Chemical mapping of a 207-nucleotide RNA with DMS and 2A3. For DMS the reverse transcriptase was MarathonRT. The 2A3 profile rests on 1,106 reads. For DMS, 5,046 sequencing reads were counted.
RNA sequence: GGGAACGACUCGAGUAGAGUCGAAAAGGUGCAGGCCUCUCAGCGCCACUGAGACACAGCUUGGAAAAUUUGUAAUAAAAAAAUGGACUGACGCUCCUGGUCCUGUGAUGUGUGUUUUUAGAUGGAAGACAUCAAUUUUUCGUCCCUGGCACCGCGAAACUUUCGAGUUAUUCGUAACUCGAAAGUUAAAAGAAACAACAACAACAAC
Reactivity to DMS in 0.01 (KOAc 150mM, MgCl2 10mM, bicine 150mM(pH8.5), 24C), signal-to-noise 2, nucleotides 027 to 156: g020g040u000g010c060a090g100g050c020c030u000c020u000c030a090g030c040g000c080c060a130c020u000g000a140g000a170c070a100c070a050g000c060u000u000g020g000a090a100a120a120u000u000u000g020u000a100a170u090a030a020a060a070a060a130a140u000g010g030a130c000u000g000a090c060g000c050u000c020c020u010g000g010u010c020c010u000g030u000g000a080u010g010u020g000u000g010u000u000u000u000u000a110g010a080u000g000g000a090a070g010a080c080a050u000c110a030a070u000u000u000u000u000c000g010u010c000c030c020u000g020g010c040a030c040c030g000c030g020a120
Reactivity to 2A3 in 0.01 (KOAc 150mM, MgCl2 10mM, bicine 150mM(pH8.5), 24C), signal-to-noise 3, nucleotides 027 to 156: g040g000u030g040c020a000g100g040c040c020u000c010u020c030a000g030c010g060c060c020a060c020u080g020a060g020a060c020a000c010a060g030c030u100u120g040g030a070a080a090a080u120u170u120g060u200a140a120u210a280a230a010a030a010a030a050u070g010g010a010c010u020g020a010c060g020c050u050c020c020u060g020g030u040c000c000u030g010u030g020a120u040g070u000g000u000g040u050u030u050u090u120a080g000a060u080g080g050a080a030g070a110c010a000u050c030a090a120u020u040u010u040u190c010g010u010c000c000c000u010g010g000c040a010c010c000g020c010g050a030